[RMDB]
RNA sequence: GGGAACGACUCGAGUAGAGUCGAAAAGCUUGUAGCUUCGGCUACAAGCAUCUAAAAUCAGCGGUAAAUAAUUACGAGGCGUUACCGCUGAUCGCCUCGAUACAACCACAUCAUUCGUGAUGUGGAACUGAAGAGGUAUCUUCGGAUACCUCUUCAGAAAAGAAACAACAACAACAAC
Reactivity to DMS in 0.01 (KOAc 150mM, MgCl2 10mM, bicine 150mM(pH8.5), 24C), signal-to-noise 2, nucleotides 027 to 126: g010c000u000u000g000u000a010g040c000u000u040c230g040g000c010u000a000c000a010a000g000c000a000u010c040u010a040a060a110a060u000c000a000g000c000g030g010u010a020a030a050u000a010a050u010u010a110c080g020a010g020g000c050g010u010u000a040c030c000g010c000u000g000a000u000c000g010c000c000u000c010g000a250u030a090c220a060a130c010c000a000c000a010u000c000a040u010u010c170g010u000g000a000u010g000u000g000g000a010a060
Reactivity to 2A3 in 0.01 (KOAc 150mM, MgCl2 10mM, bicine 150mM(pH8.5), 24C), signal-to-noise 3, nucleotides 027 to 126: g010c000u000u000g010u000a000g000c010u030u080c300g100g000c000u000a000c000a000a000g000c000a000u000c020u050a070a070a010a030u010c000a000g010c010g050g220u150a010a080a110u100a070a140u220u130a130c090g010a010g010g020c000g000u000u010a150c000c000g000c020u000g000a000u010c000g010c010c000u020c010g020a010u040a190c060a080a060c040c000a000c000a000u000c010a010u020u180c220g130u040g010a000u010g010u000g000g000a020a010